[RMDB]
RNA sequence: GGGAACGACUCGAGUAGAGUCGAAAAGAUAUGGAGUGCUUGUUCUUUUGACGUGCGUGUCGGAAACGACCGCACGAUAAGAAUUGCACUCCUAAGUCAAACGUAUCAAGGUUCGCCUUGAUACGAAUCACUAGGUGACGUUCGCGUCACCUAGUGAAAAAGAAACAACAACAACAAC
Reactivity to DMS in 0.01 (KOAc 150mM, MgCl2 10mM, bicine 150mM(pH8.5), 24C), signal-to-noise 1, nucleotides 027 to 126: g000a020u000a160u010g020g010a020g000u000g010c010u010u030g020u000u000c010u000u000u010u020g000a250c080g030u000g000c010g020u030g010u030c000g020g000a050a010a120c000g030a000c000c010g030c000a000c010g000a020u000a030a060g010a030a030u000u000g020c010a000c010u000c000c000u000a000a090g000u010c020a070a100a240c040g000u000a000u000c000a000a010g000g030u000u020c260g000c000c000u000u000g000a010u000a000c000g010a090a040
Reactivity to 2A3 in 0.01 (KOAc 150mM, MgCl2 10mM, bicine 150mM(pH8.5), 24C), signal-to-noise 2, nucleotides 027 to 126: g010a000u010a000u040g020g000a000g010u010g040c050u260u160g090u210u020c020u040u300u210u300g160a060c050g000u010g000c020g030u300g000u130c000g030g000a050a030a020c010g000a000c000c000g000c010a000c000g000a000u020a000a030g000a000a010u060u000g030c010a010c010u020c000c000u010a020a000g000u000c040a050a000a130c010g000u000a000u000c000a000a010g050g040u050u100c240g140c080c000u000u010g000a000u010a010c000g010a010a060

The data come from the RNA Mapping Database (RMDB), library TTRDEL. The record gives the reactivity of an RNA of 177 nucleotides to DMS and 2A3. The DMS profile rests on 1,472 reads. The 2A3 profile rests on 3,080 reads.